[RMDB]
RNA sequence: GGGAACGACUCGAGUAGAGUCGAAAAAAGACUGAAUAUACCCCCACAGCAUGCCUCUGGCAGGAUGGAGUUGUAGAAUGGAUACAUUUGCCUCAUAUUUCACCAAAGGUGAUUACUCCUUAUGAUAUCUUUUGUACACAACUUAUUAUUAAGGGCCGAAUUGAAAUGGAUUCGUCCAUUUCAAUUCAAAAGAAACAACAACAACAAC
Reactivity to DMS in 0.01 (KOAc 150mM, MgCl2 10mM, bicine 150mM(pH8.5), 24C), signal-to-noise 2, nucleotides 027 to 156: a050a060g010a170c020u000g000a050a110u000a180u000a180c030c000c010c030c050a110c090a020g020c000a080u010g020c030c000u000c080u030g020g010c050a050g010g000a050u010g010g000a110g010u000u030g050u000a080g030a130a080u000g020g010a100u000a070c000a110u000u010u000g010c070c040u000c040a140u000a150u000u010u000c040a030c050c020a100a110a180g040g060u000g020a040u000u000a100c060u000c000c000u000u020a040u000g000a080u000a000u000c010u000u010u000u000g020u000a080c080a040c060a030a020c000u000u000a080u010u000a120u000u000a030a000g030g020g040c100c080
Reactivity to 2A3 in 0.01 (KOAc 150mM, MgCl2 10mM, bicine 150mM(pH8.5), 24C), signal-to-noise 2, nucleotides 027 to 156: a000a020g100a060c130u150g030a160a030u160a030u160a250c010c020c000c000c000a030c040a010g050c020a020u090g040c010c020u060c050u100g050g000c020a020g000g040a020u090g020g030a020g020u040u030g010u050a040g080a060a030u100g020g010a020u040a020c000a060u050u020u140g040c050c000u050c010a030u060a090u140u110u010c010a010c000c000a190a080a040g020g010u000g020a020u000u060a050c070u090c040c000u010u050a020u010g070a090u010a010u070c000u000u150u040u040g070u090a010c030a000c000a080a030c000u060u010a010u080u030a070u050u110a110a070g030g020g000c020c050